[RMDB]
RNA sequence: GGGAACGACUCGAGUAGAGUCGAAAAAGCCCCCCAGGACGGCGAUGUGGUUGAACUGGUCCGUGCUGCUGGUGGCAUACCCCUUUUGGUGUCUGCCAAUCCAGAGUUUUGCAUGAGUUUCGAAACACAGCUAUUUACUAUUCGUAGUAAAUAGCUGAAAAGAAACAACAACAACAAC
Reactivity to 2A3 in 0.01 (KOAc 150mM, MgCl2 10mM, bicine 150mM(pH8.5), 24C), signal-to-noise 2, nucleotides 027 to 126: a000g010c000c010c010c000c030c000a000g060g020a010c010g010g020c010g050a070u100g060u060g050g130u140u140g060a110a060c000u030g010g010u100c000c010g010u040g030c000u010g000c000u010g030g010u010g000g000c000a000u010a040c060c000c000c050u060u090u100u300g060g010u020g020u000c020u030g000c000c020a020a110u050c010c000a010g020a040g070u010u050u150u140g040c040a060u060g020a020g050u040u030u030c020g040a040a040a020c040a000
Reactivity to DMS in 0.01 (KOAc 150mM, MgCl2 10mM, bicine 150mM(pH8.5), 24C), signal-to-noise 8, nucleotides 027 to 126: a130g010c050c040c010c050c080c010a030g010g010a030c010g010g010c020g010a050u000g010u010g000g030u000u010g020a110a050c010u000g000g000u010c010c010g030u000g000c000u000g000c010u000g000g020u000g000g000c000a020u000a020c010c040c000c130u010u000u010u010g020g010u000g010u000c050u000g010c010c010a060a110u010c010c000a010g010a190g010u000u000u000u010g010c070a080u000g010a200g010u000u000u000c020g010a090a100a130c300a230